[RMDB]
RNA sequence: GGGAACGACUCGAGUAGAGUCGAAAAAAGGUGCCAAUAGGGUGUCGCUACCGGUCAUUGUGAUACCACGUUUCGCCGAUGCGGUAAGAACCCAGGAUCUCGGCACGCCGUGCGAUGUACCGGGUCGGGGGCAUUUAGUAUUCGUACUAAAUGCCCCAAAAGAAACAACAACAACAAC
Reactivity to DMS in 0.01 (KOAc 150mM, MgCl2 10mM, bicine 150mM(pH8.5), 24C), signal-to-noise 2, nucleotides 027 to 126: a070a080g000g000u000g010c010c020a170a170u010a050g000g010g020u000g000u000c020g030c070u000a090c040c000g000g010u000c050a120u000u000g010u000g000a110u020a100c190c100a110c150g000u000u010u000c070g020c040c180g020a020u010g000c030g030g000u010a060a080g000a120a070c010c010c010a150g020g000a070u010c120u000c170g010g040c010a010c010g000c070c060g030u000g050c040g030a030u010g030u010a040c010c010g020g000g010u010c020g000
Reactivity to 2A3 in 0.01 (KOAc 150mM, MgCl2 10mM, bicine 150mM(pH8.5), 24C), signal-to-noise 1, nucleotides 027 to 126: a000a000g070g000u010g000c000c020a080a010u160a210g000g030g010u050g110u120c040g000c160u050a050c010c000g040g040u110c040a030u030u110g040u050g090a050u100a120c030c010a100c140g080u070u010u040c100g020c050c000g010a010u070g090c020g000g040u030a050a020g020a230a080c000c000c000a020g090g100a030u080c080u080c070g010g010c000a010c000g020c060c030g000u040g050c000g000a000u040g000u080a000c020c010g090g010g000u020c040g020
Structure probing data (DMS and 2A3) for a 177-nucleotide construct. Source: RMDB library OK2TRN, as collected in RNAgym. 2A3 adducts were read by reverse transcription with SuperScript II with manganese.